[RMDB]
An RNA of 207 nucleotides, treated with 2A3 and DMS and read out base by base. It was measured as part of the RMDB library OK3TST. As a SHAPE reagent, 2A3 marks flexible, mostly unpaired nucleotides at the ribose 2'-OH. For 2A3 the reverse transcriptase was SuperScript II with manganese. The RNA was probed in 150 mM KOAc, 10 mM MgCl2 and 150 mM bicine (pH 8.5) at 24 C.
RNA sequence: GGGAACGACUCGAGUAGAGUCGAAAAUUCCUGAGGCCUCCCCGGCCAUGCCAAACUGUGAGUCAAUUCAGCCUCUUUUGUUUAUAAAUUACGCAGUCUCAGGAAGUAUCUUUAUAGCAGUGUGAAAACAGACUAACACAAUUUCCUAAAACAAGGAGUAUUUACCAUAUUUCGAUAUGGUAAAUACAAAAGAAACAACAACAACAAC
Reactivity to 2A3 in 0.01 (KOAc 150mM, MgCl2 10mM, bicine 150mM(pH8.5), 24C), signal-to-noise 5, nucleotides 027 to 156: u000u000c000c000u000g010a010g010g030c000c000u030c010c020c010c000g020g000c000c020a030u060g040c010c040a090a120a090c060u040g020u050g070a030g030u070c030a040a050u190u020c050a100g070c010c030u090c010u070u120u110u050g080u020u170u030a170u060a070a180a080u120u050a030c070g020c060a020g020u000c010u020c010a000g010g010a040a000g030u050a080u090c080u030u190u040a170u070a070g040c080a040g010u020g010u030g130a000a040a040a050c030a010g070a050c060u090a140a010c030a000c010a060a100u000u100u070c030c000u080a070a070a020a010c050a060a010g060g000a010
Reactivity to DMS in 0.01 (KOAc 150mM, MgCl2 10mM, bicine 150mM(pH8.5), 24C), signal-to-noise 2, nucleotides 027 to 156: u000u000c000c030u000g000a060g010g000c020c040u000c030c040c040c040g030g010c020c050a020u010g010c040c020a060a080a140c020u010g020u000g020a130g040u000c030a070a160u000u000c050a080g010c050c040u000c040u000u000u000u000g010u020u000u020a090u000a040a090a110u000u000a110c090g000c040a090g020u000c030u000c020a060g020g020a050a090g030u000a050u010c050u000u000u000a080u000a110g020c020a100g020u010g010u000g000a080a070a090a160c060a090g000a160c070u000a080a070c030a040c040a070a120u000u000u000c030c040u000a040a040a080a060c080a080a090g000g020a190